RNA sequence: GGGAACGACUCGAGUAGAGUCGAAAAAGGCCACACAGACUGAAUUUGGCGACUGGAUGCGUCAGCACAAUCUGAUCUGUGCCACCCGCUGGAUGGAAAACGACGCGUCUCCCCAGGUGAUUGCCGAGCACCACGAGCGAUUCGUCGCUCGUGGUGCAAAAGAAACAACAACAACAAC
Reactivity to 2A3 in 0.01 (KOAc 150mM, MgCl2 10mM, bicine 150mM(pH8.5), 24C), signal-to-noise 1, nucleotides 027 to 126: a080g010g020c070c000a000c000a000c010a030g030a040c030u180g020a130a090u100u090u060g040g000c000g060a110c000u040g100g110a110u120g050c010g020u020c020a040g030c060a040c000a090a010u010c050u040g020a060u020c020u030g000u010g000c060c020a080c010c000c030g000c030u050g010g010a040u150g000g030a000a000a110a060c090g070a030c040g020c060g000u000c080u010c010c000c000c000a020g050g020u040g040a130u100u050g040c000c040g030a090
This 177-nucleotide RNA was probed chemically with 2A3. For 2A3, 646 sequencing reads were counted. Values cover nucleotides 27 to 126. Source: RMDB library OK1LIB, as collected in RNAgym. 2A3 adducts were read by reverse transcription with SuperScript II with manganese. Conditions: 150 mM KOAc, 10 mM MgCl2 and 150 mM bicine (pH 8.5), 24 C.